Source: RMDB library OK1LIB, as collected in RNAgym. This 177-nucleotide RNA was probed chemically with DMS and 2A3. 2A3 is a SHAPE reagent: it acylates the 2'-hydroxyl of flexible nucleotides of all four kinds. The 2A3 profile rests on 1,911 reads.
RNA sequence: GGGAACGACUCGAGUAGAGUCGAAAAGCACUGACUAUGAUGGUCUUUGACGCUGAUCGUAGUGAUUGCGUGUAUAAGGUGCUCAACAAGUUGAAAGGUUUGCUGAACACAGUGCACCAAGAGCCGGCGACUCAAGCAAUUUCGAUUGCUUGAGUCGAAAAGAAACAACAACAACAAC
Reactivity to DMS in 0.01 (KOAc 150mM, MgCl2 10mM, bicine 150mM(pH8.5), 24C), signal-to-noise 2, nucleotides 027 to 126: g000c030a020c010u000g020a020c000u030a040u000g010a060u040g000g040u010c050u050u000u010g000a080c100g010c010u000g000a040u000c020g020u020a070g010u020g000a040u000u000g000c040g030u000g000u000a030u040a070a070g000g010u000g020c050u000c000a040a030c040a010a020g010u010u000g000a110a040a230g030g020u000u000u000g020c110u000g010a020a030c020a000c000a130g020u000g040c000a130c040c140a020a060g000a150g000c060c090g010g000
Reactivity to 2A3 in 0.01 (KOAc 150mM, MgCl2 10mM, bicine 150mM(pH8.5), 24C), signal-to-noise 4, nucleotides 027 to 126: g010c020a020c040u080g030a010c020u040a040u260g100a100u220g010g040u020c000u070u110u150g070a090c040g000c060u110g080a060u040c010g030u090a050g010u000g150a100u020u060g010c020g000u000g030u000a020u010a080a090g070g000u010g020c000u000c010a010a110c000a020a040g010u050u090g160a140a100a080g110g000u050u040u010g000c010u000g030a040a030c050a000c000a030g030u010g020c020a020c020c000a010a020g060a000g060c090c040g070g040